RNA sequence: GGGAACGACUCGAGUAGAGUCGAAAAGAACCGCGAUUCGUCGCGGUUCGAGCGCCGUAGCGCGCAACGGCGUAACGGCAGCAUUAGCGCGCAGGUGCCGACGAUCGGGUGGUUUCGACCACCCGAAACCUUCUGUGAAUUUCGAUUCACAGAAGGUAAAAGAAACAACAACAACAAC
Reactivity to DMS in 0.01 (KOAc 150mM, MgCl2 10mM, bicine 150mM(pH8.5), 24C), signal-to-noise 6, nucleotides 027 to 126: g010a020a010c010c000g020c000g010a030u000u010c190g030u000c000g020c000g010g000u000u000c000g000a090g010c010g020c000c000g010u010a070g010c020g000c000g010c010a030a080c300g000g000c000g000u000a110a100c210g010g000c030a160g010c040a050u010u000a290g010c000g020c010g050c010a130g000g000u000g020c010c030g000a120c150g010a110u000c000g010g000g020u010g000g000u000u000u020c160g000a040c000c000a010c000c000c000g000a000a030
Reactivity to 2A3 in 0.01 (KOAc 150mM, MgCl2 10mM, bicine 150mM(pH8.5), 24C), signal-to-noise 3, nucleotides 027 to 126: g000a000a000c000c000g000c000g010a030u060u050c200g020u010c000g130c000g000g000u000u010c010g000a000g000c000g000c010c010g080u120a070g010c000g000c000g010c020a030a010c040g030g010c020g030u070a150a070c080g190g020c040a040g000c020a050u040u090a040g000c000g000c000g000c010a010g020g010u020g020c030c020g080a130c060g040a090u060c000g000g010g000u010g000g010u030u040u040c060g020a020c010c000a010c000c000c000g000a010a000